The record gives the reactivity of an RNA of 177 nucleotides to DMS. The reactions ran in a buffer of 150 mM KOAc, 10 mM MgCl2 and 150 mM bicine (pH 8.5), at 24 C. Source: RMDB library TTRDEL, as collected in RNAgym.
RNA sequence: GGGAACGACUCGAGUAGAGUCGAAAAGAUAUGGAUGUAAGUGGAGUCCCUCGGAAACGAGAAGGACGAUGAAGCUUCACAUCCUAAGUCAAAGAAACCUCCAAAGCUUCGGCUUUGGAGGUUUCAACAAGCACAAGUUGUUCGCAACUUGUGCUUGAAAAGAAACAACAACAACAAC
Reactivity to DMS in 0.01 (KOAc 150mM, MgCl2 10mM, bicine 150mM(pH8.5), 24C), signal-to-noise 1, nucleotides 027 to 126: g010a060u000a300u000g000g000a000u010g010u030a000a010g010u000g010g000a040g010u000c000c010c000u000c010g000g000a070a120a140c000g010a000g020a140a090g010g000a020c000g040a050u030g000a070a280g000c000u000u000c180a010c000a010u000c020c000u000a010a070g010u000c030a040a130a160g000a000a000a020c000c000u000c010c000a010a010a020g020c000u000u010c210g060g000c010u020u010u000g040g000a000g000g000u000u000u000c000a080a190